[RMDB]
RNA sequence: GGGAACGACUCGAGUAGAGUCGAAAAUCUUCGGUGCCUCGUCCGGCAAGCCCCUAAGAGACACCAUGGGCAGACCGGUGUGUCUUCGGUCUUUUGCCGAUAUGGAUAACACGUCGUCAGAGGAGGAAGUCACAAAACUCUUCGGAGUUUUGUGACUAAAAGAAACAACAACAACAAC
Reactivity to 2A3 in 0.01 (KOAc 150mM, MgCl2 10mM, bicine 150mM(pH8.5), 24C), signal-to-noise 1, nucleotides 027 to 126: u050c080u050u060c020g050g010u080g030c000c010u010c010g100u070c130c030g040g000c040a050a000g090c070c010c000c040u000a100a010g000a000g000a000c000a000c020c000a070u130g000g000g000c020a030g080a090c000c000g000g020u000g000u000g040u000c000u000u000c080g010g030u070c070u030u260u000u090g010c000c000g000a010u020a020u100g030g000a020u020a190a040c000a020c060g080u110c020g060u040c050a020g000a030g060g060a010g000g040a130
Reactivity to DMS in 0.01 (KOAc 150mM, MgCl2 10mM, bicine 150mM(pH8.5), 24C), signal-to-noise 1, nucleotides 027 to 126: u010c080u030u000c080g040g020u020g000c030c000u000c090g010u000c070c010g000g020c100a030a100g030c230c130c030c080u020a090a060g030a060g000a070c060a030c010c010a050u060g080g000g000c190a100g000a110c050c020g040g040u020g000u020g000u000c010u000u010c130g010g000u060c020u000u060u000u040g080c010c000g000a000u020a090u040g020g030a090u000a150a110c110a060c130g000u000c030g000u000c050a060g000a040g050g000a070g000g000a200